[RMDB]
RNA sequence: GGGAACGACUCGAGUAGAGUCGAAAAGAUAUGGAAUGGACCACAGUUCAACAGCUCGGAAACGAGACAUGAACGUGGACCAUUCCUAAGUCAAAGUCAAGACGUGUCUUCGGACACGUCUUGACAAGGUGUAAAACUUGUUCGCAAGUUUUACACCAAAAGAAACAACAACAACAAC
Reactivity to 2A3 in 0.01 (KOAc 150mM, MgCl2 10mM, bicine 150mM(pH8.5), 24C), signal-to-noise 4, nucleotides 027 to 126: g010a010u050a050u130g000g000a000a000u000g000g000a010c010c000a010c070a130g030u010u000c020a080a070c050a170g050c010u000c010g030g020a060a080a060c010g000a010g050a050c020a090u080g000a000a000c010g000u010g000g000a000c000c000a000u000u010c000c000u000a070a030g000u000c050a080a080a020g000u000c010a000a000g010a010c020g010u000g010u000c000u090u190c300g020g000a000c000a000c000g000u000c000u000u000g000a000c000a000a010
Reactivity to DMS in 0.01 (KOAc 150mM, MgCl2 10mM, bicine 150mM(pH8.5), 24C), signal-to-noise 5, nucleotides 027 to 126: g010a040u000a300u000g000g000a010a010u000g000g020a150c010c010a000c000a110g030u000u000c000a010a080c220a180g010c000u000c000g010g000a130a060a230c010g000a020g010a050c120a180u010g000a000a020c000g000u010g000g000a070c000c010a000u000u000c000c000u000a010a060g000u000c040a080a130a120g000u000c000a000a010g000a010c000g020u000g000u000c000u000u010c180g030g000a000c000a000c010g010u010c000u000u010g000a000c000a010a010